This 177-nucleotide RNA was probed chemically with 2A3 and DMS.
2A3 adducts were read by reverse transcription with SuperScript II with manganese.
RNA sequence: GGGAACGACUCGAGUAGAGUCGAAAAAGUCUGAUUAUCGCAUUAAAUUCGGCAUGAUAUUACAUGAUUUAAUGUGAUAUCAGUGCGAUAUCUUGCAGGACCGAGACGUAGCUUAACGCGUCAUCAAGAUAAUGUCUUAUUUCGAUAAGACAUUAUCAAAAGAAACAACAACAACAAC
Reactivity to 2A3 in 0.01 (KOAc 150mM, MgCl2 10mM, bicine 150mM(pH8.5), 24C), signal-to-noise 9, nucleotides 027 to 126: a000g060u020c020u020g010a030u040u180a010u030c000g000c000a000u000u080a050a050a080u220u100c060g090g040c080a030u040g040a030u050a040u120u110a050c020a020u050g060a150u150u090u170a070a010u000g000u000g000a000u000a000u000c010a000g010u020g010c000g000a010u010a050u090c060u030u100g050c050a060g020g090a040c010c040g020a020g000a030c010g020u030a040g080c070u110u140a120a020c090g000c000g020u010c010a090u060c020a070a020
Reactivity to DMS in 0.01 (KOAc 150mM, MgCl2 10mM, bicine 150mM(pH8.5), 24C), signal-to-noise 9, nucleotides 027 to 126: a090g000u010c020u000g000a060u010u010a000u010c000g000c000a010u000u010a030a060a100u020u020c150g010g020c090a100u010g000a070u010a030u000u010a030c010a040u010g000a150u020u030u030a050a000u000g010u010g010a000u000a010u000c000a020g000u000g010c020g000a040u010a030u010c060u000u020g010c060a080g000g000a090c040c050g000a060g000a020c010g010u000a090g040c190u040u040a090a130c130g000c010g010u000c020a110u020c110a070a110

It was measured as part of the RMDB library OK1LIB.